[RMDB]
RNA sequence: GGGAACGACUCGAGUAGAGUCGAAAAGGGGUCCACCAUCGAUCAAGUCGUAGUUCAUGUGGAGACAAACUGAAGCCUCCACGGUUUGUCGUUGAAACAUGAGGUUCGAAGACUUGGGAGGUGGACGGAGGCACCCAAACUGAUCUUCGGAUCAGAACAUAAGAGUCGAGUUCGCUCGACUCUUAUGAAAAGAAACAACAACAACAAC
Reactivity to 2A3 in 0.01 (KOAc 150mM, MgCl2 10mM, bicine 150mM(pH8.5), 24C), signal-to-noise 3, nucleotides 027 to 156: g110g020g040g040u030c010c010a010c000c000a090u300c010g010a010u010c010a010a000g030u000c010g090u100a010g060u030u000c000a000u000g010u040g020g070a040g000a010c000a000a010a000c000u010g040a180a010g040c010c010u000c000c010a010c000g000g000u000u000u000g010u000c010g140u180u090g020a010a010a000c000a000u010g020a020g020g070u210u140c040g090a130a010g000a020c000u000u000g010g000g000a010g000g000u000g000g000a010c030g000g000a010g000g010c020a070c010c000c000a060a090a070c010u010g000a000u000c010u020u100c300g100g000a010u010c010a000g010a040a010
Reactivity to DMS in 0.01 (KOAc 150mM, MgCl2 10mM, bicine 150mM(pH8.5), 24C), signal-to-noise 1, nucleotides 027 to 156: g010g000g020g010u010c020c000a010c020c020a300u030c090g000a070u010c020a020a010g010u000c000g000u000a280g010u010u000c020a000u020g020u000g030g000a300g030a010c030a050a010a040c010u010g010a090a130g020c010c000u000c010c000a260c000g000g010u020u000u010g020u000c000g000u000u030g010a270a190a020c020a030u000g000a040g000g010u000u020c020g000a130a300g010a010c010u000u010g000g000g010a090g030g030u020g010g000a030c090g020g030a060g020g030c030a060c000c000c000a040a090a110c020u010g020a000u010c000u010u000c300g010g020a050u010c000a020g000a090a300